[RMDB]
RNA sequence: GGGAACGACUCGAGUAGAGUCGAAAAGCCGUGCUCGAGAGGGAGCAGAAAAUGCAGAGCUAUCCCGUCGUUUCGCUAAACAAAUGCGAAACGACAAAUUGCCUUACAUACGCAAUCCUCUAAUGAAAGUAGCACUUGUUUUCGAACAAGUGCUACUAAAAGAAACAACAACAACAAC
Reactivity to DMS in 0.01 (KOAc 150mM, MgCl2 10mM, bicine 150mM(pH8.5), 24C), signal-to-noise 2, nucleotides 027 to 126: g010c000c030g000u000g000c000u010c020g010a070g010a040g010g020g000a000g000c000a060g020a090a050a100a030u000g000c160a070g000a170g020c020u000a050u010c060c050c050g020u000c000g030u000u000u000c000g010c020u010a060a100a080c300a100a070a090u010g000c010g000a000a010a000c000g000a000c020a000a010a040u000u000g010c020c030u010u040a020c100a110u020a050c150g000c120a070a120u000c000c020u000c000u010a080a170u000g000a090a090
Reactivity to 2A3 in 0.01 (KOAc 150mM, MgCl2 10mM, bicine 150mM(pH8.5), 24C), signal-to-noise 2, nucleotides 027 to 126: g030c000c010g100u040g020c000u030c040g080a040g030a010g030g050g000a010g000c020a000g150a000a200a000a000u120g010c060a010g050a030g010c000u020a030u050c000c020c020g000u000c000g010u000u010u000c040g020c010u050a230a200a020c090a010a150a040u090g030c020g000a000a000a000c000g020a000c000a000a020a000u040u040g000c000c010u090u070a050c030a090u120a040c030g000c010a010a060u060c020c010u000c000u040a040a010u170g120a160a120
Background
Structure probing data (DMS and 2A3) for a 177-nucleotide construct. 2A3 adducts were read by reverse transcription with SuperScript II with manganese. For 2A3, 1,859 sequencing reads were counted. The RNA was probed in 150 mM KOAc, 10 mM MgCl2 and 150 mM bicine (pH 8.5) at 24 C.